[RMDB]
The record gives the reactivity of an RNA of 207 nucleotides to DMS and 2A3. For 2A3 the reverse transcriptase was SuperScript II with manganese. The DMS profile rests on 1,780 reads. Values cover nucleotides 27 to 156. DMS adducts were read by reverse transcription with MarathonRT.
RNA sequence: GGGAACGACUCGAGUAGAGUCGAAAAAUGUCUUUUUACAUAAAUGUUACAGAUGUCCAUCUGAGAUUGUUAAUACUGUUUCAGAGCUUGUUUAUGAAAAUAAGUUCAAGCCUGUUAAAACAGAAAGUAAGGAGUGCUUUAAAAUUUAUUGUAAGGGAAAUCGGAAUAAGUUCGCUUAUUCCGAUUUAAAAGAAACAACAACAACAAC
Reactivity to DMS in 0.01 (KOAc 150mM, MgCl2 10mM, bicine 150mM(pH8.5), 24C), signal-to-noise 1, nucleotides 027 to 156: a080u030g010u030c040u000u000u000u010u000a050c010a140u000a110a040a090u030g000u000u000a160c050a080g020a080u000g000u000c030c040a180u000c060u010g000a100g000a140u020u000g050u000u000a050a150u000a150c050u000g000u000u000u000c000a050g000a110g030c000u010u010g000u000u000u000a060u010g000a170a060a250a050u000a030a020g000u010u010c010a000a040g000c020c030u000g000u010u000a060a020a060a070c030a020g000a080a050a160g030u010a080a110g010g000a110g050u020g000c030u000u000u000a030a020a070a090u000u020u000a030u020u000g010u020a040a050g040g020g000
Reactivity to 2A3 in 0.01 (KOAc 150mM, MgCl2 10mM, bicine 150mM(pH8.5), 24C), signal-to-noise 1, nucleotides 027 to 156: a000u050g080u030c000u010u220u000u040u030a020c000a000u120a050a150a070u120g010u130u100a050c000a040g050a050u020g080u060c050c000a140u050c030u060g040a070g020a140u150u040g030u000u070a190a100u050a160c020u060g020u040u000u010c000a010g000a120g080c010u040u000g010u070u100u000a060u040g010a030a100a000a000u040a070a030g030u070u030c010a000a000g020c010c010u070g020u080u080a050a000a070a000c000a010g070a090a070a000g000u040a050a050g030g000a030g010u030g040c000u000u000u220a060a090a010a000u060u160u080a130u130u010g030u040a060a020g020g000g100
For 2A3, 751 sequencing reads were counted. The data come from the RNA Mapping Database (RMDB), library OK3TST.